[RMDB]
RNA sequence: GGGAACGACUCGAGUAGAGUCGAAAAAAUGUUCUGUUCGCAGAACAUUAAGCUGGUGUCCCGACCAGCCUGGAUGUCAGUACACGAAGUGCCAGAUCGGGAAUGCCUCCGGCUUCGGCCGGAGGAAGAAUCAUUUGGAAUUCGUUCCAAAUGAUUCAAAAGAAACAACAACAACAAC
Reactivity to DMS in 0.01 (KOAc 150mM, MgCl2 10mM, bicine 150mM(pH8.5), 24C), signal-to-noise 4, nucleotides 027 to 126: a020a020u000g010u000u000c000u000g010u010u010c200g030c010a010g000a010a010c000a010u000u000a050a120g000c010u000g000g010u000g000u000c000c000c010g010a130c000c010a020g010c020c070u000g010g010a070u000g010u000c060a090g010u000a060c070a090c090g010a100a100g010u000g000c020c020a100g000a100u010c040g010g000g000a110a080u010g010c010c010u000c000c000g010g010c010u000u000c220g020g020c000c000g010g000a000g000g000a010a010
Reactivity to 2A3 in 0.01 (KOAc 150mM, MgCl2 10mM, bicine 150mM(pH8.5), 24C), signal-to-noise 5, nucleotides 027 to 126: a000a000u020g000u010u000c000u010g010u020u040c250g030c070a000g000a020a000c000a000u010u010a050a020g020c000u000g000g020u030g030u050c000c000c010g000a000c000c000a000g040c000c020u060g060g030a080u110g070u190c060a050g070u140a060c100a020c140g150a180a030g030u050g110c000c020a030g010a120u050c030g020g000g040a040a060u090g050c000c000u020c010c010g000g030c000u030u100c210g090g000c020c020g000g020a000g000g000a000a000
The record gives the reactivity of an RNA of 177 nucleotides to DMS and 2A3. It was measured as part of the RMDB library M2PK50. 2A3 adducts were read by reverse transcription with SuperScript II with manganese. The 2A3 profile rests on 8,848 reads.